[RMDB]
RNA sequence: GGGAACGACUCGAGUAGAGUCGAAAAUCGAGAGACAAUGUGAGAAAGUUGGCCAGGCUGAGAAAGUCCACUUGGACUCAGGCGGGGUCCAAGCCUUGGCCUCAGCUUCCUUCUCUGUCUGGGCGUGCUUGGAAUGCGAAUUCGUUCGCAUUCCAAGAAAAGAAACAACAACAACAAC
Reactivity to 2A3 in 0.01 (KOAc 150mM, MgCl2 10mM, bicine 150mM(pH8.5), 24C), signal-to-noise 1, nucleotides 027 to 126: u090c010g000a000g000a000g000a000c010a020a150u200g040u160g120a030g040a040a080a010g040u050u040g080g000c160c050a020g010g000c000u010g010a020g040a080a080a010g060u040c000c020a050c060u010u080g020g000a000c020u000c050a050g300g010c130g020g060g000g030u050c030c000a020a000g010c010c010u030u110g000g000c040c000u010c000a000g010c000u040u000c010c010u040u050c020u060c020u040g020u000c020u020g050g150g000c040g010u070g020
Reactivity to DMS in 0.01 (KOAc 150mM, MgCl2 10mM, bicine 150mM(pH8.5), 24C), signal-to-noise 1, nucleotides 027 to 126: u020c060g000a130g000a020g010a050c030a050a080u010g010u000g000a030g000a040a030a050g000u010u000g000g000c080c140a040g000g000c010u000g000a010g010a100a080a070g010u010c060c160a190c090u000u000g000g000a010c010u020c080a080g000g010c120g030g000g010g010u000c000c040a020a030g010c130c050u010u000g020g020c060c010u000c040a040g010c010u000u010c070c050u010u000c010u000c030u000g000u000c000u000g020g000g000c000g000u000g020